[RMDB]
RNA sequence: GGGAACGACUCGAGUAGAGUCGAAAAUUUGAAACACUUUCAGCAUGUCGUGCGUAUUUGGAUUCACGCACGACACAGCAGUUAACAAUCGAAGUCUUAGUGACUGUCGAUGGUGUAAAUUUUAGAACGUAACUUUAGACUUCGGUCUAAAGUUACGAAAAGAAACAACAACAACAAC
Reactivity to 2A3 in 0.01 (KOAc 150mM, MgCl2 10mM, bicine 150mM(pH8.5), 24C), signal-to-noise 3, nucleotides 027 to 126: u010u010u050g030a050a080a020c030a000c020u030u080u030c020a010g000c010a010u010g000u000c010g010u000g000c000g000u010a070u030u150u150g240g050a100u090u130c100a000c000g000c000a000c000g000a000c000a000c000a000g020c010a000g000u020u040a070a030c050a050a060u010c000g000a020a010g010u000c010u060u120a140g030u100g160a000c000u050g130u050c000g000a000u010g010g000u020g010u020a050a100a080u090u100u030u040a060g030a090a000
Reactivity to DMS in 0.01 (KOAc 150mM, MgCl2 10mM, bicine 150mM(pH8.5), 24C), signal-to-noise 3, nucleotides 027 to 126: u000u000u010g020a150a210a040c020a020c020u000u010u010c040a070g030c010a300u000g000u000c000g030u000g000c000g010u000a080u000u010u010g010g010a220u000u000c160a020c010g010c000a000c000g000a010c010a000c050a070g020c030a040g020u000u000a030a150c300a090a010u010c010g000a110a010g010u000c000u000u030a210g010u020g000a010c000u000g000u000c000g010a010u000g000g020u000g000u010a000a060a050u000u000u000u000a140g010a120a100

The data come from the RNA Mapping Database (RMDB), library 15KREP. The record gives the reactivity of an RNA of 177 nucleotides to 2A3 and DMS. The reactions ran in a buffer of 150 mM KOAc, 10 mM MgCl2 and 150 mM bicine (pH 8.5), at 24 C. For DMS the reverse transcriptase was MarathonRT. For 2A3, 2,616 sequencing reads were counted.